[RMDB]
RNA sequence: GGGAACGACUCGAGUAGAGUCGAAAAGCUAAGUUUCGACUUAGCCGCCAGUCCUAAGUCGUGUGCGCGGGAGAGUCGGGUGUCGGAAACGACAUCUCUAGCGUGCUCUUUGAUCGAUGCACACGAUAUGGAAUUAACAUGUCCUUCGGGACAUGAAGAUAGUUUAUAGUUUCGACUAUAAACUAUCAAAAGAAACAACAACAACAAC
Reactivity to DMS in 0.01 (KOAc 150mM, MgCl2 10mM, bicine 150mM(pH8.5), 24C), signal-to-noise 4, nucleotides 027 to 156: g000c020u000a020a010g020u000u000u000c270g040a090c000u000u000a020g030c010c030g000c040c050a150g010u000c020c020u010a060a300g010u000c000g050u000g030u000g040c000g010c010g000g010g000a040g000a020g030u000c010g020g010g020u000g010u000c000g030g010a140a110a280c010g010a040c000a010u000c000u000c040u010a100g020c190g000u010g020c010u010c010u010u000u000g010a070u000c010g000a150u000g030c010a020c000a030c000g010a010u000a160u000g000g000a110a090u000u000a090a270c010a010u000g000u000c000c000u020u010c300g050g010g020a010c010a000u000g010a060a140
Reactivity to 2A3 in 0.01 (KOAc 150mM, MgCl2 10mM, bicine 150mM(pH8.5), 24C), signal-to-noise 9, nucleotides 027 to 156: g000c000u010a010a000g010u020u080u300c230g100a050c020u010u010a000g000c000c010g080c020c030a040g090u030c000c000u070a180a050g010u000c000g000u000g000u000g000c010g000c010g010g020g010a010g000a000g010u040c040g010g000g000u000g000u000c000g030g030a060a070a100c010g010a000c000a010u010c050u000c060u090a080g110c060g190u210g010c020u010c000u090u070u060g140a160u140c050g140a230u100g000c000a000c000a000c000g000a000u000a010u020g000g020a010a020u130u070a140a050c000a010u000g000u000c000c000u030u080c250g080g000g000a000c000a000u000g010a010a030

An RNA of 207 nucleotides, treated with DMS and 2A3 and read out base by base.
The reactions ran in a buffer of 150 mM KOAc, 10 mM MgCl2 and 150 mM bicine (pH 8.5), at 24 C.
For DMS, 10,224 sequencing reads were counted.
The data come from the RNA Mapping Database (RMDB), library RNAMAK.
Values cover nucleotides 27 to 156.
For 2A3, 21,907 sequencing reads were counted.